[RMDB]
RNA sequence: GGGAACGACUCGAGUAGAGUCGAAAAGAUAUGGACCGUUGGACAUGACGAAGAAGGGUCGGAAACGACCCGUACCGUCAACAGCCACCGGUCCUAAGUCAAAGGGUCUGCCUUCGGGCAGACCCAACGAUGAGACCAGGUUCGCCUGGUCUCAUCGAAAAGAAACAACAACAACAAC
Reactivity to DMS in 0.01 (KOAc 150mM, MgCl2 10mM, bicine 150mM(pH8.5), 24C), signal-to-noise 1, nucleotides 027 to 126: g000a060u000a300u000g000g000a010c000c000g020u000u000g010g010a080c190a300u000g000a000c000g030a030a040g010a110a200g000g000g000u000c010g020g000a060a100a280c010g000a000c020c000c000g000u000a080c280c020g030u000c000a030a090c270a160g000c000c000a000c040c000g000g010u000c020c000u000a040a020g000u000c050a120a180a210g000g000g010u000c000u000g000c020c000u000u030c260g050g000g010c000a080g000a010c020c000c000a000a010